The data come from the RNA Mapping Database (RMDB), library OK1LIB. Chemical mapping of a 177-nucleotide RNA with 2A3 and DMS. DMS adducts were read by reverse transcription with MarathonRT. For 2A3 the reverse transcriptase was SuperScript II with manganese.

[RMDB]
RNA sequence: GGGAACGACUCGAGUAGAGUCGAAAAGACGCGAGAGACGCGAGACGCGCAAUGGCAGAAGCCGCAAUAGAUGAUACGAAGGAAGAGGCAAGACGGAGAGCGCGCAACGAUCUCAAAUAACCAAGAAACUACGUACGGAGUUCGCUCCGUACGUAGUAAAAGAAACAACAACAACAAC
Reactivity to 2A3 in 0.01 (KOAc 150mM, MgCl2 10mM, bicine 150mM(pH8.5), 24C), signal-to-noise 3, nucleotides 027 to 126: g100a060c040g020c060g050a080g020a000g050a100c000g010c000g080a040g040a140c000g020c020g000c000a080a180u100g060g020c030a000g020a170a000g030c000c020g000c020a060a090u030a130g050a050u060g030a020u090a100c070g040a040a080g080g060a070a060g030a090g070g040c060a100a020g010a030c040g020g020a070g000a000g080c000g000c000g000c010a000a020c040g040a030u000c010u010c000a040a110a000u090a010a090c010c000a080a000g080a080a160
Reactivity to DMS in 0.01 (KOAc 150mM, MgCl2 10mM, bicine 150mM(pH8.5), 24C), signal-to-noise 2, nucleotides 027 to 126: g000a160c080g000c150g020a070g000a040g010a070c030g000c070g030a160g040a270c040g000c020g000c000a080a060u000g000g020c000a090g000a130a230g050c070c000g090c010a080a080u030a070g010a050u000g000a120u030a060c120g010a110a100g000g040a030a060g000a090g010g000c040a000a000g000a010c000g050g000a030g000a160g010c000g000c000g000c140a070a020c060g000a190u000c010u000c000a020a140a000u070a130a170c080c020a040a050g000a070a090